Chemical mapping of a 177-nucleotide RNA with 2A3 and DMS. For DMS, 40,719 sequencing reads were counted. The reactions ran in a buffer of 150 mM KOAc, 10 mM MgCl2 and 150 mM bicine (pH 8.5), at 24 C.
RNA sequence: GGGAACGACUCGAGUAGAGUCGAAAAGCUAGCCAGCGCACGAUGAGACUGCCCUGACGUCUAGCCUGCGUCUCAACUAGUCUCCAUCAAUCAAAACGCUGGGAUUGAUGUACGAGACUAGUACACAGAGUAAGCACUUGUUCGCAGGUGUUUACUCAAAAGAAACAACAACAACAAC
Reactivity to 2A3 in 0.01 (KOAc 150mM, MgCl2 10mM, bicine 150mM(pH8.5), 24C), signal-to-noise 9, nucleotides 027 to 126: g010c010u020a010g010c000c010a000g000c000g000c010a020c030g080a060u180g020a020g040a050c030u020g000c000c000c000u010g020a020c040g010u030c010u010a010g000c000c010u040g030c020g050u000c010u000c010a020a010c000u000a000g000u000c000u000c000c000a000u000c000a000a000u000c010a010a050a060a110c120g040c110u150g060g010g000a000u000u000g000a000u000g030u120a090c110g000a000g000a000c000u000a000g000u030a010c120a000c020a030
Reactivity to DMS in 0.01 (KOAc 150mM, MgCl2 10mM, bicine 150mM(pH8.5), 24C), signal-to-noise 9, nucleotides 027 to 126: g000c020u010a040g020c020c000a040g010c300g020c030a040c080g000a220u020g000a120g010a170c210u000g000c000c050c000u000g000a080c130g000u030c010u010a050g000c020c020u010g010c090g000u010c010u000c040a100a040c010u000a000g000u000c000u000c000c000a010u010c000a010a010u010c010a070a060a100a110c150g010c140u030g010g010g000a010u000u000g000a010u000g000u030a090c160g010a020g010a010c000u000a000g000u010a030c230a110c220a120